Chemical mapping of a 177-nucleotide RNA with DMS. The DMS profile rests on 1,397 reads.
[RMDB]
RNA sequence: GGGAACGACUCGAGUAGAGUCGAAAAAGCUGCUCGCAAUCGCGCCAAAGGACCGGCGUAGCGCGCGGAGCUAACUGCUGAGGUUGCAAAAAUAGGUCCUUUAUGGAGCAGCCAUAGCAGAUUUACAAAUGCGGUAGCUAUUCGUAGCUACCGCAUUAAAAGAAACAACAACAACAAC
Reactivity to DMS in 0.01 (KOAc 150mM, MgCl2 10mM, bicine 150mM(pH8.5), 24C), signal-to-noise 2, nucleotides 027 to 126: a050g010c000u000g030c000u000c000g010c030a200a090u020c170g010c010g000c000c000a060a130a050g000g000a020c010c020g000g050c010g040u010a060g010c200g020c100g030c090g000g010a090g010c020u010a050a120c020u000g000c010u000g000a090g040g030u000u010g050c000a050a060a060a100a070u000a070g000g010u010c000c000u000u010u010a060u000g000g020a260g000c010a000g010c000c000a040u000a010g000c000a020g010a150u000u000u000a040c160a090